RNA sequence: GGGAACGACUCGAGUAGAGUCGAAAAUGGGACUUCCUAGCACAUUUUUUUUGUGUUGAUCCGUGUAGGAUUGGGAACCCGCCGAAUUGAAACAUCUUAGUAGGCGGAGGAAAAGAAAGCAAUAUGCCGUCAUAACGGUAUUCGUACCGUUAUGACGAAAAGAAACAACAACAACAAC
Reactivity to DMS in 0.01 (KOAc 150mM, MgCl2 10mM, bicine 150mM(pH8.5), 24C), signal-to-noise 3, nucleotides 027 to 126: u010g010g030g010a130c070u000u000c000c010u000a050g000c000a020c010a000u000u010u000u020u010u020u070u000g020u000g010u000u020g000a030u010c010c020g010u050g050u050a150g000g000a030u010u000g030g000g000a180a150c070c000c000g020c030c000g010a100a130u000u000g030a050a110a100c260a080u010c070u020u000a040g000u000a040g000g000c010g000g010a100g030g000a050a040a090a080g010a070a040a100g000c060a080a070u040a100u020g010c080
Reactivity to 2A3 in 0.01 (KOAc 150mM, MgCl2 10mM, bicine 150mM(pH8.5), 24C), signal-to-noise 3, nucleotides 027 to 126: u110g020g030g030a030c030u030u010c000c010u000a000g010c000a010c000a020u010u020u000u010u010u120u130u030g010u000g020u010u040g050a040u000c000c000g050u090g200u250a080g000g030a030u020u090g040g000g000a010a040c000c000c000g000c010c000g030a020a020u020u030g020a060a110a140c080a150u100c030u020u020a020g000u010a000g000g000c030g020g000a080g010g080a060a030a030a000g200a040a040a000g010c040a070a040u060a060u300g030c030